An RNA of 177 nucleotides, treated with 2A3 and DMS and read out base by base. For DMS, 5,963 sequencing reads were counted. 2A3 adducts were read by reverse transcription with SuperScript II with manganese. The data come from the RNA Mapping Database (RMDB), library TTRDEL. For DMS the reverse transcriptase was MarathonRT.
RNA sequence: GGGAACGACUCGAGUAGAGUCGAAAAGAUAUGGAUGGAAACGGGAGAGGGCUCGGAAACGAGCCUCGAAGAACGUUCCCAUCCUAAGUCAAACCUGUAAGGCUACCUUCGGGUAGCCUUACAGGAAGAAAAACAUAAUGUUCGCAUUAUGUUUUUCAAAAGAAACAACAACAACAAC
Reactivity to 2A3 in 0.01 (KOAc 150mM, MgCl2 10mM, bicine 150mM(pH8.5), 24C), signal-to-noise 1, nucleotides 027 to 126: g020a010u040a020u160g010g010a000u010g000g000a030a020a000c010g000g000g030a090g030a050g060g160g150c000u000c000g010g000a040a050a030c030g000a010g000c010c020u000c010g020a020a050g030a020a000c010g000u010u000c000c000c000a000u010c000c010u010a110a000g030u000c040a050a040a120c000c000u000g010u010a000a000g010g000c000u000a000c000c010u040u200c300g060g000g010u000a000g030c000c000u000u000a000c000a000g020g000a000a000
Reactivity to DMS in 0.01 (KOAc 150mM, MgCl2 10mM, bicine 150mM(pH8.5), 24C), signal-to-noise 4, nucleotides 027 to 126: g000a050u000a300u010g000g000a000u000g010g000a000a000a000c000g000g000g000a170g000a120g010g000g020c010u000c000g000g010a070a070a170c000g010a010g010c000c000u000c030g010a060a100g020a200a160c000g000u000u000c020c000c000a010u000c000c000u010a020a070g010u000c030a120a150a160c000c010u000g000u000a000a010g000g000c000u000a000c000c010u000u020c170g020g010g020u000a000g000c000c000u000u000a000c000a010g000g000a020a040